Chemical mapping of a 177-nucleotide RNA with DMS and 2A3. The DMS profile rests on 59,860 reads. For 2A3, 37,946 sequencing reads were counted. The reactions ran in a buffer of 150 mM KOAc, 10 mM MgCl2 and 150 mM bicine (pH 8.5), at 24 C.
[RMDB]
RNA sequence: GGGAACGACUCGAGUAGAGUCGAAAAACCUAUGGAUUCGUCCAUAGGUGCUGGCGCGCGGCCUUUGUCCUGUCGCGUGUGCGUGGUGGGCGAUUUACGCGCAAUAGUGACAAUUCGUUGUCACUAAGUAUAAGUGUAUAUUCGUAUACACUUAUACAAAAGAAACAACAACAACAAC
Reactivity to DMS in 0.01 (KOAc 150mM, MgCl2 10mM, bicine 150mM(pH8.5), 24C), signal-to-noise 9, nucleotides 027 to 126: a020c000c000u000a010u000g000g000a030u000u010c190g010u000c000c000a010u000a000g000g010u000g010c110u000g010g020c080g010c010g010c020g010g000c130c120u000u000u000g010u010c030c030u000g010u000c010g010c010g010u010g020u010g020c040g040u000g010g010u000g000g000g010c020g010a060u000u000u000a120c030g010c020g020c040a130a140u000a010g010u000g000a020c000a010a040u000u010c200g010u000u000g010u000c000a010c000u000a010a090
Reactivity to 2A3 in 0.01 (KOAc 150mM, MgCl2 10mM, bicine 150mM(pH8.5), 24C), signal-to-noise 6, nucleotides 027 to 126: a000c000c000u000a000u000g000g000a010u030u100c190g040u020c070c000a000u000a000g000g000u010g040c080u060g060g080c040g000c000g000c000g040g040c010c000u060u080u090g060u090c010c000u030g030u050c010g000c020g050u140g160u160g140c030g000u030g010g040u040g020g030g000c020g000a000u020u050u180a060c020g020c000g000c010a030a090u100a040g000u000g000a000c000a010a020u050u060c230g100u090u010g000u000c000a000c010u010a070a060